[RMDB]
RNA sequence: GGGAACGACUCGAGUAGAGUCGAAAAUUGCGCCUCCGAUUCGCCGUCGGCAUUUCCCCGGCAGCCAUGACCUACCAGGCUGCGGUGCGGCUCGCCGCACAGGUCAUCCCUCAUCGGGCGCGUCCUGGAUAGGGCUAUACUUUCGAGUAUAGCCCAAGUAGAAAUACAGUUUCGACUGUAUUUCUACAAAAGAAACAACAACAACAAC
Reactivity to DMS in 0.01 (KOAc 150mM, MgCl2 10mM, bicine 150mM(pH8.5), 24C), signal-to-noise 2, nucleotides 027 to 156: u010u000g010c000g000c020c010u000c020c010g000a110u000u010c080g030c060c070g000u000c030g020g010c120a160u010u000u000c040c000c000c050g050g050c030a030g000c010c040a130u000g000a050c030c030u010a150c020c050a140g000g030c030u000g030c020g020g010u000g000c010g030g010c060u000c240g050c000c000g000c040a050c050a050g020g010u000c030a160u000c020c030c030u000c080a090u000c050g000g010g020c020g010c040g000u000c030c010u000g000g000a230u000a120g010g050g040c000u000a020u000a010c000u000u000u010c250g000a050g010u000a010u000a020g000c000c010c010a000a030
Reactivity to 2A3 in 0.01 (KOAc 150mM, MgCl2 10mM, bicine 150mM(pH8.5), 24C), signal-to-noise 5, nucleotides 027 to 156: u100u070g020c020g000c020c020u070c050c020g040a050u090u150c080g010c070c030g040u020c020g000g040c040a060u060u080u070c020c020c030c000g080g000c020a000g000c030c020a130u120g020a080c000c010u090a140c090c040a040g020g010c030u010g000c010g000g000u050g020c020g030g000c090u100c140g120c040c000g000c010a020c010a020g000g040u050c020a090u090c030c030c010u130c030a110u080c060g010g000g010c010g010c020g020u040c010c010u030g070g000a120u100a170g020g000g000c000u010a000u000a000c000u030u060u140c250g100a020g000u000a010u010a030g000c010c000c000a000a000
Chemical mapping of a 207-nucleotide RNA with DMS and 2A3. DMS adducts were read by reverse transcription with MarathonRT. The DMS profile rests on 5,258 reads. For 2A3, 4,058 sequencing reads were counted. The reactions ran in a buffer of 150 mM KOAc, 10 mM MgCl2 and 150 mM bicine (pH 8.5), at 24 C. Source: RMDB library M2RFPK, as collected in RNAgym.